An RNA of 207 nucleotides, treated with 2A3 and DMS and read out base by base. The reactions ran in a buffer of 150 mM KOAc, 10 mM MgCl2 and 150 mM bicine (pH 8.5), at 24 C. High DMS reactivity at an A or C suggests that its Watson-Crick edge is free. For DMS the reverse transcriptase was MarathonRT.
RNA sequence: GGGAACGACUCGAGUAGAGUCGAAAAAACGCAGCGGCAGGUAGAGCAAUGCCGAAACCUCUUCAUGGUAGGUGCGGGCAACGGCAGGCGCGCCGGCGGCCGUAGGCUCCUGAGCCGUUUCCGCGGCCCGGGCCGCUUCUCUACCGACAAAGAUGGGCAGUUCAAUUUAAUUCGUUAAAUUGAACUGAAAAGAAACAACAACAACAAC
Reactivity to 2A3 in 0.01 (KOAc 150mM, MgCl2 10mM, bicine 150mM(pH8.5), 24C), signal-to-noise 2, nucleotides 027 to 156: a000a000c090g020c070a070g040c030g090g000c060a050g030g020u030a010g010a000g060c070a100a090u070g000c000c000g050a100a010a010c000c010u050c030u120u070c100a150u160g090g010u130a040g000g020u090g040c050g010g010g010c030a010a040c010g020g000c010a020g030g010c030g030c070g000c030c000g080g020c110g000g010c000c000g050u040a100g000g040c040u050c020c070u090g030a030g020c000c000g010u040u100u000c030c020g000c000g000g010c000c000c000g020g020g020c030c010g000c000u140u000c000u000c000u010a000c020c000g020a020c030a020a050a010g100a060u120g020g010g010
Reactivity to DMS in 0.01 (KOAc 150mM, MgCl2 10mM, bicine 150mM(pH8.5), 24C), signal-to-noise 1, nucleotides 027 to 156: a030a030c080g000c030a100g010c040g050g070c000a080g010g050u000a020g020a060g040c080a160a210u000g040c000c030g030a030a140a040c010c010u010c040u000u010c100a120u010g030g000u000a060g020g030u000g030c300g000g000g020c010a050a230c030g000g010c040a030g030g010c050g040c140g050c020c020g000g020c140g000g000c010c020g000u000a070g040g010c000u000c050c040u000g010a040g000c010c000g000u000u000u000c140c070g050c000g030g000c010c010c020g000g010g030c000c010g000c040u000u010c020u000c000u000a070c030c010g000a110c110a040a010a060g000a100u000g000g020g010